[RMDB]
RNA sequence: GGGAACGACUCGAGUAGAGUCGAAAAGGCGACGACGAUGAAUCGAAAUGGGCCCACGCAACGGCGAGCACGGGCUGGCGGCAGGGGCCUGUCGCCGGCGAGGGGGGAUCGCGUCGCCGGCGGGAUAGGAUUAAUCGUGAUUCGUCACGAUUAAUCCAAAAGAAACAACAACAACAAC
Reactivity to DMS in 0.01 (KOAc 150mM, MgCl2 10mM, bicine 150mM(pH8.5), 24C), signal-to-noise 2, nucleotides 027 to 126: g020g000c000g010a030c030g020a160c020g000a030u010g030a150a100u010c070g000a070a100a110u010g050g020g000c030c000c030a090c070g030c070a090a100c110g040g010c030g000a090g020c080a140c110g010g000g000c020u010g000g000c010g010g020c040a070g000g010g010g020c130c000u010g000u000c010g030c000c000g000g010c000g010a060g010g000g010g000g020g010a070u000c010g010c030g000u000c010g010c020c000g020g010c130g000g000g010a150u000a130
Reactivity to 2A3 in 0.01 (KOAc 150mM, MgCl2 10mM, bicine 150mM(pH8.5), 24C), signal-to-noise 2, nucleotides 027 to 126: g000g020c020g000a010c000g020a030c010g020a020u030g100a070a180u140c100g040a120a060a090u220g030g060g050c020c000c000a030c040g010c030a100a140c080g100g010c010g020a050g030c080a020c090g040g090g000c020u020g040g010c030g040g000c030a050g040g020g090g050c000c010u000g010u020c010g030c020c000g010g000c020g000a140g000g080g020g020g000g020a000u040c020g000c010g010u000c000g000c020c000g000g010c000g050g030g010a060u130a110
About this RNA
Chemical mapping of a 177-nucleotide RNA with DMS and 2A3. The DMS profile rests on 2,101 reads. Reactivities are given for positions 27 through 126. The RNA was probed in 150 mM KOAc, 10 mM MgCl2 and 150 mM bicine (pH 8.5) at 24 C.